Structure probing data (DMS and 2A3) for a 207-nucleotide construct.
2A3 adducts were read by reverse transcription with SuperScript II with manganese.
High DMS reactivity at an A or C suggests that its Watson-Crick edge is free.
The reactions ran in a buffer of 150 mM KOAc, 10 mM MgCl2 and 150 mM bicine (pH 8.5), at 24 C.
DMS adducts were read by reverse transcription with MarathonRT.
[RMDB]
RNA sequence: GGGAACGACUCGAGUAGAGUCGAAAAAGGUGAUUUCUCCUGCACCUUUAUCAAUGGAGGAACUCGACUUUGCUGUGGGUCCCAAAGGGACCUUAGGUGCAGACAGUUACCGGCGGUGAAGUGUGAACAUAGGUUCGUGUCUUCGGACACGAACCAAGUUAUGUAGAAGGUUCGCCUUCUACAUAACAAAAGAAACAACAACAACAAC
Reactivity to DMS in 0.01 (KOAc 150mM, MgCl2 10mM, bicine 150mM(pH8.5), 24C), signal-to-noise 4, nucleotides 027 to 156: a050g010g020u000g000a300u000u000u000c040u000c030c030u000g010c030a070c030c010u000u000u010a060u000c160a110a180u010g010g010a150g010g010a030a100c080u000c000g010a110c030u010u010u000g030c040u000g010u000g000g000g020u010c010c010c010a070a120a190g030g020g000a030c010c010u000u000a020g050g030u010g020c050a100g010a110c130a090g000u000u000a070c000c010g000g010c140g000g000u000g020a040a050g050u010g000u000g020a070a100c060a140u010a140g030g020u000u000c010g010u000g020u000c000u010u010c300g040g020a020c000a020c010g010a000a000c010c000a010a040
Reactivity to 2A3 in 0.01 (KOAc 150mM, MgCl2 10mM, bicine 150mM(pH8.5), 24C), signal-to-noise 8, nucleotides 027 to 156: a010g010g010u030g000a040u030u050u010c020u020c000c010u140g080c020a010c010c010u080u190u100a040u030c050a020a040u300g010g000a020g010g030a030a030c040u030c050g060a010c020u030u030u040g000c010u020g010u100g030g000g010u000c000c000c020a140a130a090g010g010g000a010c020c010u010u060a020g000g000u010g000c000a020g100a290c030a010g030u050u090a010c000c010g030g000c020g000g030u020g010a010a020g030u050g040u050g110a080a020c060a140u180a100g000g010u000u000c000g000u000g000u000c000u010u050c170g080g000a000c000a000c000g000a000a000c000c000a000a000